[RMDB]
The data come from the RNA Mapping Database (RMDB), library M2RFPK. An RNA of 207 nucleotides, treated with 2A3 and read out base by base. The reactions ran in a buffer of 150 mM KOAc, 10 mM MgCl2 and 150 mM bicine (pH 8.5), at 24 C.
RNA sequence: GGGAACGACUCGAGUAGAGUCGAAAAAGGUUCGCUGUGGUGUAACUCUUAUUAGUAACUAAUCCAAAGCAAGUAUAGGAGAACAGGUUUUUAACUAUUUUUAGGCAGAUAAAAAAUAGUAUUUGACAAAAUCGAUUGUCGUUCGCGACAAUCGAAAGUGUAGAGUUGUGUUCGCACAACUCUACACAAAAGAAACAACAACAACAAC
Reactivity to 2A3 in 0.01 (KOAc 150mM, MgCl2 10mM, bicine 150mM(pH8.5), 24C), signal-to-noise 1, nucleotides 027 to 156: a020g060g000u060u040c030g020c040u040g060u050g060g020u060g030u040a060a080c020u020c070u080u090a090u080u030a090g040u100a050a070c050u020a100a070u090c020c080a110a040a000g010c020a050a000g030u030a090u080a090g060g000a040g040a060a060c050a050g110g000u020u110u000u000u000a040a030c000u000a010u000u020u060u030u000a040g010g000c030a020g060a110u120a040a080a000a000a020a010u000a000g010u020a140u050u050u080g080a030c080a040a100a000a090u030c000g000a000u010u000g000u010c000g010u010u010c170g010c000g110a020c020a000a000u000c010g020a000a000a010